[RMDB]
RNA sequence: GGGAACGACUCGAGUAGAGUCGAAAACGCCGAACGCCGCUGCCGGCGGUUCGUAGUCCGCCAGGUCGACCACCAGGGUGUCGAUCGACACGCCUUUCGCCUCGGCCAGCCGGCGCGCCUUGGCCAAGUGCAGCAUAGGGUUCGCCCUAUGCUGCACAAAAGAAACAACAACAACAAC
Reactivity to 2A3 in 0.01 (KOAc 150mM, MgCl2 10mM, bicine 150mM(pH8.5), 24C), signal-to-noise 1, nucleotides 027 to 126: c050g010c010c000g020a070a000c060g020c070c000g040c100u140g020c010c030g030g030c010g000g080u190u130c010g000u010a000g050u000c020c030g080c000c070a040g040g030u060c040g030a020c010c000a030c030c040a050g130g020g000u060g000u020c000g080a170u080c100g010a020c000a090c030g100c000c000u030u090u130c030g000c010c010u050c030g010g000c000c000a010g030c040c020g010g000c000g040c000g020c030c020u000u070g020g000c000c000a180a090
Reactivity to DMS in 0.01 (KOAc 150mM, MgCl2 10mM, bicine 150mM(pH8.5), 24C), signal-to-noise 1, nucleotides 027 to 126: c140g030c040c020g000a020a070c070g010c070c000g060c050u020g040c040c070g020g020c010g000g040u000u030c050g030u010a100g010u000c110c070g000c040c060a160g030g000u000c030g000a070c110c030a120c080c090a150g030g010g060u010g030u000c010g010a110u000c110g020a010c100a000c060g000c060c030u010u010u010c100g020c120c040u000c060g000g000c050c010a180g070c030c040g020g010c000g000c000g000c040c040u000u010g000g010c010c150a040a090
Chemical mapping of a 177-nucleotide RNA with 2A3 and DMS. Values cover nucleotides 27 to 126. The RNA was probed in 150 mM KOAc, 10 mM MgCl2 and 150 mM bicine (pH 8.5) at 24 C. It was measured as part of the RMDB library OK2TST.